[RMDB]
RNA sequence: GGGAACGACUCGAGUAGAGUCGAAAAAAGCGGGCGACACGUUCCUGCUGCACGCGGCCGCGGGCGGCGUGGGGCUGAUCGUCUGCCAGUGGGCGAAGCUGCUCGGGCUGAACGUGAUCGGCACCGACUGGGAUGAUUACUUCGGUAAUCAUCCCAGAAAAGAAACAACAACAACAAC
Reactivity to 2A3 in 0.01 (KOAc 150mM, MgCl2 10mM, bicine 150mM(pH8.5), 24C), signal-to-noise 1, nucleotides 027 to 126: a000a000g050c030g000g010g000c000g010a010c010a010c040g000u000u000c020c010u010g000c010u070g030c030a030c000g080c000g160g070c060c110g150c000g040g020g000c050g020g000c060g040u000g010g100g030g000c000u010g020a130u030c000g040u060c040u000g000c020c020a120g070u200g030g040g000c010g020a060a030g050c020u030g040c020u010c000g050g020g000c040u070g020a070a010c050g050u050g030a230u000c000g050g050c080a100c030c010g030a060
Reactivity to DMS in 0.01 (KOAc 150mM, MgCl2 10mM, bicine 150mM(pH8.5), 24C), signal-to-noise 1, nucleotides 027 to 126: a070a070g030c010g010g000g030c010g000a000c000a080c070g010u000u000c010c050u010g000c000u010g010c020a010c020g000c000g010g030c160c100g050c100g020g010g030c000g010g010c020g000u000g010g020g020g000c030u010g000a150u000c010g020u000c030u010g020c030c050a060g030u020g000g000g000c010g020a070a050g000c000u000g010c040u000c070g010g000g000c080u000g000a030a080c090g010u000g000a110u000c030g010g000c030a100c020c010g000a170